[RMDB]
Chemical mapping of a 177-nucleotide RNA with DMS.
The RNA was probed in 150 mM KOAc, 10 mM MgCl2 and 150 mM bicine (pH 8.5) at 24 C.
RNA sequence: GGGAACGACUCGAGUAGAGUCGAAAACCCGUGUCGGCGACGACGGUCGUGUACUGCUUGAGCUGGUCGAGUGCGGUAGUCAUGACGAGUCGAAAGCGAGGCGCGGCGCGCCGGUUCGGUGAGGACAAAUUAGCUGGUCGUUCGCGACCAGCUAAUUAAAAGAAACAACAACAACAAC
Reactivity to DMS in 0.01 (KOAc 150mM, MgCl2 10mM, bicine 150mM(pH8.5), 24C), signal-to-noise 1, nucleotides 027 to 126: c000c000c010g010u000g010u000c030g010g000c060g010a220c040g030a050c090g010g000u010c000g060u000g000u010a090c020u010g000c060u000u000g020a200g000c020u000g010g040u000c090g000a100g030u010g030c110g000g000u000a080g010u000c030a020u010g010a020c020g000a070g010u000c010g000a070a130a180g010c040g010a140g020g000c020g030c000g020g050c080g020c040g030c020c020g010g000u010u010c070g020g010u030g000a130g010g000a070c080a090